Source: RMDB library TTRDES, as collected in RNAgym. Chemical mapping of a 177-nucleotide RNA with DMS and 2A3. The DMS profile rests on 1,349 reads. 2A3 adducts were read by reverse transcription with SuperScript II with manganese. DMS adducts were read by reverse transcription with MarathonRT. The reactions ran in a buffer of 150 mM KOAc, 10 mM MgCl2 and 150 mM bicine (pH 8.5), at 24 C. Reactivities are rounded to 0.1 and cut off at 0 and 3.
[RMDB]
RNA sequence: GGGAACGACUCGAGUAGAGUCGAAAAGAUAUGGAAUCAGUACCGAGCGAGGAUCUAGGCUCGGAAACGAGCCUAGGGAGCUCGGUACAGAUUCCUAAGUCAAAACGCAGCGCUUCGGCGCUGCGAAGAUAGAUAAUGAGUUCGCUCAUUAUCUAUCAAAAGAAACAACAACAACAAC
Reactivity to DMS in 0.01 (KOAc 150mM, MgCl2 10mM, bicine 150mM(pH8.5), 24C), signal-to-noise 1, nucleotides 027 to 126: g000a020u020a300u010g000g000a000a000u000c020a100g020u000a010c010c000g000a000g020c030g000a070g020g000a030u010c000u000a020g020g000c020u000c000g010g010a010a040a220c030g020a020g010c000c000u000a010g010g000g010a040g070c000u000c000g040g010u000a020c010a010g020a010u000u000c010c000u000a000a060g020u000c030a070a040a190a180c060g040c000a000g030c010g040c000u000u030c250g030g020c000g000c000u000g000c000g010a040a040
Reactivity to 2A3 in 0.01 (KOAc 150mM, MgCl2 10mM, bicine 150mM(pH8.5), 24C), signal-to-noise 1, nucleotides 027 to 126: g010a000u080a010u130g010g010a000a010u010c020a010g020u020a000c020c000g000a000g010c020g060a300g060g010a000u000c000u000a010g040g000c010u000c000g000g000a010a010a010c010g000a000g080c250c000u000a000g010g000g000a000g050c000u020c020g050g000u010a010c000a020g010a010u000u050c000c000u010a030a010g030u030c000a040a000a080a090c030g000c020a010g050c000g040c060u110u300c300g140g030c020g000c010u040g020c000g000a010a010